[RMDB]
An RNA of 207 nucleotides, treated with 2A3 and read out base by base. The RNA was probed in 150 mM KOAc, 10 mM MgCl2 and 150 mM bicine (pH 8.5) at 24 C.
RNA sequence: GGGAACGACUCGAGUAGAGUCGAAAAUUGGAAUUCGUUCCAAGCAACGCGUACUACAGGUCUGAAUGAUCAUCGAUCUUGUCAGUGAUCCCAAAUAGGAUCACUUGGAUUUAGGGAGAUCGCGACCUGUAUCGCUGGUCUACCGUUUCGACGGUAAGCUCUCCGUGGUAUUCGUACCACGGAGAGCAAAAGAAACAACAACAACAAC
Reactivity to 2A3 in 0.01 (KOAc 150mM, MgCl2 10mM, bicine 150mM(pH8.5), 24C), signal-to-noise 1, nucleotides 027 to 156: u000u000g010g000a000a000u020u020c060g080u150u000c010c000a000a030g040c100a000a120c070g000c040g110u170a090c070u000a000c000a000g050g000u000c010u120g160a220a110u090g000a000u090c000a020u090c050g060a150u040c100u000u100g120u050c050a000g090u000g000a000u130c080c000c000a120a300a210u300a040g010g010a000u060c000a000c050u110u200g030g000a000u140u020u250a040g000g050g120a040g000a000u000c000g020c010g000a000c130c000u000g000u010a000u140c010g000c000u000g050g000u170c050u020a000c000c000g100u070u130u150c090g070a000c000g000g000u000a000a210